[RMDB]
An RNA of 177 nucleotides, treated with DMS and read out base by base. The RNA was probed in 150 mM KOAc, 10 mM MgCl2 and 150 mM bicine (pH 8.5) at 24 C. It was measured as part of the RMDB library TTRINS.
RNA sequence: GGGAACGACUCGAGUAGAGUCGAAAAGAUAUGGAAUCUUCUAUUCCCUACACGCUCCGAUAAGUUGGUCUCGGAAACGAGACACAACUUUUGACGGAGCGGUAGGGAAUAGAAGAUUCCUAAGUCAGGAUUAUCUAUGGUUCGCCAUAGAUAAUCCAAAAGAAACAACAACAACAAC
Reactivity to DMS in 0.01 (KOAc 150mM, MgCl2 10mM, bicine 150mM(pH8.5), 24C), signal-to-noise 2, nucleotides 027 to 126: g000a050u000a300u010g010g000a040a010u000c000u010u000c000u010a000u000u010c000c000c000u000a010c000a220c020g030c000u020c000c000g030a210u000a020a020g010u000u000g000g000u000c000u000c000g010g010a200a120a260c000g000a050g000a010c000a060c000a000a010c010u000u000u000u000g010a210c100g000g010a000g040c000g000g000u000a000g000g020g000a000a000u010a000g020a000a010g000a010u000u000c000c000u010a010a070g000u000c080a150